[RMDB]
RNA sequence: GGGAACGACUCGAGUAGAGUCGAAAAGCAGUCCCCCGUGAUAGUCUUGUUCACGUAAGGCGACAGGGCGACCACGCUAGAGACCCCCGAGAUGGGCAGGUAGCGCGUGAGGCCGCCCGCGGGGACGGGGUCGUUCGAGCUUCGGCUCGAACGACCCAAAAGAAACAACAACAACAAC
Reactivity to 2A3 in 0.01 (KOAc 150mM, MgCl2 10mM, bicine 150mM(pH8.5), 24C), signal-to-noise 1, nucleotides 027 to 126: g010c000a000g010u070c000c000c000c050c000g040u000g110a170u050a080g030u000c030u080u060g190u150u140c100a020c110g070u060a070a000g040g020c060g000a040c070a050g070g000g000c060g000a000c000c000a000c000g000c000u180a120g000a030g000a230c020c000c000c000c000g100a100g080a300u300g030g030g000c050a130g080g000u020a220g060c030g000c010g000u000g020a170g140g010c230c020g000c000c020c020g000c020g000g070g000g020a000c000g000